[RMDB]
RNA sequence: GGGAACGACUCGAGUAGAGUCGAAAAUGUCCAUCAACUCACGAAUGUCUAACGAUCCCGGUUAAUGGACACGUGGGGAGUCGGUGCUGUCCCACAAAGCAACACAUUUGUAGUCAGCCACCUCAGACCUCCCUAAUUACUUCGGUAAUUAGGGAGGAAAAGAAACAACAACAACAAC
Reactivity to DMS in 0.01 (KOAc 150mM, MgCl2 10mM, bicine 150mM(pH8.5), 24C), signal-to-noise 3, nucleotides 027 to 126: u010g010u020c000c030a070u010c140a050a110c040u000c050a050c060g000a160a040u000g010u000c050u000a060a070c070g040a100u000c020c030c070g020g000u020u010a120a130u000g000g010a010c000a070c080g000u000g000g000g010g010a110g010u000c060g000g020u010g030c100u010g020u020c090c030c030a060c180a050a070a050g000c060a090a070c130a050c130a080u010u000u000g040u010a120g000u000c030a070g000c060c070a070c030c030u000c080a180g010a180
Reactivity to 2A3 in 0.01 (KOAc 150mM, MgCl2 10mM, bicine 150mM(pH8.5), 24C), signal-to-noise 3, nucleotides 027 to 126: u070g020u000c030c000a040u070c040a010a070c010u020c020a030c030g090a300a190u130g000u010c030u060a110a030c030g060a100u040c000c010c000g020g000u100u100a110a100u150g040g000a000c010a010c020g020u070g000g000g000g010a050g070u080c070g000g000u070g040c030u030g020u010c000c100c000a010c010a010a030a000g080c040a060a060c030a030c020a180u020u050u110g020u000a030g020u020c010a000g040c060c010a050c030c000u030c020a020g030a160